This 177-nucleotide RNA was probed chemically with 2A3 and DMS.
[RMDB]
RNA sequence: GGGAACGACUCGAGUAGAGUCGAAAAAAGUUGAUAUGGAUUUACUCCGAGGAGACGAACUACCACGAACAGGGGAAACUCUACCCGUGGCGUCUCCGUUUGACGAGUAAGUCCCAAGUCAACAAAAGCUAACUAUAAAGUUCGCUUUAUAGUUAGCAAAAGAAACAACAACAACAAC
Reactivity to 2A3 in 0.01 (KOAc 150mM, MgCl2 10mM, bicine 150mM(pH8.5), 24C), signal-to-noise 2, nucleotides 027 to 126: a000a000g020u010u000g000a020u030a040u160g000g000a000u000u000u000a010c010u000c010c000g020a020g000g010a000g030a000c000g000a040a030c070u160a060c090c010a000c000g020a060a020c030a090g010g000g000g000a020a010a020c010u010c010u020a020c030c020c010g000u000g010g000c010g000u010c000u000c000c000g000u040u030u050g020a010c010g000a000g000u000a000a000g000u000c010c000c000a070a030g010u000c000a000a000c010a010a050a010a000
Reactivity to DMS in 0.01 (KOAc 150mM, MgCl2 10mM, bicine 150mM(pH8.5), 24C), signal-to-noise 3, nucleotides 027 to 126: a050a090g010u000u010g000a020u000a090u010g000g000a020u000u000u000a010c000u000c000c010g000a070g000g000a010g000a010c000g000a040a040c040u020a300c010c000a010c010g000a050a220c180a120g010g000g000g000a050a010a040c010u000c000u000a120c300c190c010g010u000g010g000c000g000u000c000u000c000c000g000u000u000u000g010a160c300g010a020g000u000a000a000g000u000c000c000c060a000a120g000u000c010a010a000c000a090a060a080a080
Source: RMDB library 15KREP, as collected in RNAgym.